[RMDB]
RNA sequence: GGGAACGACUCGAGUAGAGUCGAAAAGAUAUGGAUCGAGGUAGGGAGCUGACCAUCGGAAACGAUGGUUCAGCUUUGAUCUACUCGAUCCUAAGUCAAAACCACGCGGAGCUUCGGCUCCGCGUGGGUGCGAAUAAAGGUUCGCCUUUAUUCGCACAAAAGAAACAACAACAACAAC
Reactivity to DMS in 0.01 (KOAc 150mM, MgCl2 10mM, bicine 150mM(pH8.5), 24C), signal-to-noise 1, nucleotides 027 to 126: g000a040u010a140u010g000g000a000u000c000g010a060g030g010u010a060g020g020g000a010g020c010u000g000a070c020c000a000u000c010g000g000a040a010a080c000g000a000u000g000g020u010u000c020a010g000c000u010u000u000g010a040u000c000u000a040c000u000c010g010a000u000c000c000u000a010a050g010u000c000a080a140a180a300c000c010a000c000g040c000g010g010a030g020c000u000u000c210g040g030c010u000c000c010g000c010g050u000g000g020
Reactivity to 2A3 in 0.01 (KOAc 150mM, MgCl2 10mM, bicine 150mM(pH8.5), 24C), signal-to-noise 1, nucleotides 027 to 126: g000a010u030a000u090g000g000a010u000c010g020a010g020g160u070a020g020g040g060a040g030c010u000g010a010c000c010a010u000c000g000g000a040a000a030c010g000a000u000g000g020u030u130c010a000g020c030u030u100u060g000a000u020c000u030a020c000u000c010g010a010u030c010c000u000a000a000g010u040c020a010a060a090a180c020c020a020c020g010c000g040g020a030g000c030u140u190c300g250g010c040u060c010c000g020c020g000u000g020g000